Overview: The record gives the reactivity of an RNA of 177 nucleotides to 2A3 and DMS. Source: RMDB library RFM100, as collected in RNAgym. Conditions: 150 mM KOAc, 10 mM MgCl2 and 150 mM bicine (pH 8.5), 24 C. In probing experiments dimethyl sulfate is read out at A N1 and C N3, which are open when not base-paired. Reactivities are given for positions 27 through 126.
[RMDB]
RNA sequence: GGGAACGACUCGAGUAGAGUCGAAAAGCCGUGUGCGCAGACAGUGCUCCAGCCGCGCGCGCGCCCCAGGCCCCGGCCCGGGCCUCGGUUCCAGAAGGGAGAGGAGCCCGCCAAGGCGCGCAAGAGAGGAACUUAACUCUUUCGAGAGUUAAGUUCCAAAAGAAACAACAACAACAAC
Reactivity to 2A3 in 0.01 (KOAc 150mM, MgCl2 10mM, bicine 150mM(pH8.5), 24C), signal-to-noise 3, nucleotides 027 to 126: g060c020c030g020u040g010u070g010c060g000c030a010g050a110c020a040g100u050g070c030u000c030c020a080g010c010c030g020c000g000c020g000c010g010c010g070c020c000c000c000a000g020g000c000c010c030c080g090g000c050c020c020g000g010g030c000c020u000c020g040g020u070u050c020c000a060g120a200a180g110g040g020a080g020a030g060g010a040g020c010c020c000g000c000c030a040a050g020g000c010g000c000g000c020a070a010g070a000g030a030
Reactivity to DMS in 0.01 (KOAc 150mM, MgCl2 10mM, bicine 150mM(pH8.5), 24C), signal-to-noise 2, nucleotides 027 to 126: g050c090c000g060u020g010u000g020c000g000c000a110g010a050c120a110g060u010g000c010u040c090c110a130g000c040c020g020c030g000c090g000c030g000c030g000c020c020c000c030a080g010g000c010c020c080c040g020g000c100c030c090g040g000g010c020c010u020c090g010g000u020u000c000c000a150g000a200a120g010g000g000a120g030a250g010g020a110g010c010c000c040g000c150c050a140a120g000g020c000g000c000g000c050a100a100g030a120g030a230

Notes:
2A3 adducts were read by reverse transcription with SuperScript II with manganese.